[RMDB]
RNA sequence: GGGAACGACUCGAGUAGAGUCGAAAAGGAUCUGAGUACUUAUAAGUGCGAAGUGAGUGAGGGUCUUACGAGCACUAAUUACAUCCCUCUAUUAAGUAUCGAAGAUCGGCCGGAGAUCGAGAUACGACUAUUACCCGGCGACUGUACGAAGAUCCGACGAUCCGUGAUAUUUCGAUAUCACGGAUCGAAAAGAAACAACAACAACAAC
Reactivity to DMS in 0.01 (KOAc 150mM, MgCl2 10mM, bicine 150mM(pH8.5), 24C), signal-to-noise 1, nucleotides 027 to 156: g010g010a030u000c020u000g000a300g030u000a040c000u000u000a070u000a070a050g040u010g090c080g010a130a230g000u010g010a070g030u000g020a070g020g130g050u010c070u020u000a050c030g000a300g030c030a010c040u000a110a050u000u000a100c140a110u000c000c000c000u000c050u000a220u000u000a050a120g030u030a050u000c030g000a110a210g040a020u000c010g040g070c000c080g000g010a280g000a050u000c030g030a300g040a090u000a040c040g000a080c160u000a110u010u000a050c040c010c020g000g040c000g010a220c130u010g040u000a080c080g010a300a050g000a170u010c000c000g030a220
Reactivity to 2A3 in 0.01 (KOAc 150mM, MgCl2 10mM, bicine 150mM(pH8.5), 24C), signal-to-noise 2, nucleotides 027 to 156: g000g010a000u000c000u010g010a010g010u000a010c020u060u100a100u060a300a000g000u000g000c000g020a070a020g010u020g000a000g000u090g000a000g000g000g000u130c000u000u010a020c020g020a020g000c000a000c020u100a040a150u080u060a060c060a090u090c000c020c000u060c000u000a150u170u220a130a010g000u000a000u000c010g020a050a000g020a010u000c020g060g010c010c000g020g000a160g000a010u000c010g000a000g000a080u020a010c010g010a000c000u030a100u280u120a260c020c010c000g010g000c020g010a040c100u110g020u000a020c000g000a030a020g010a000u000c000c000g010a000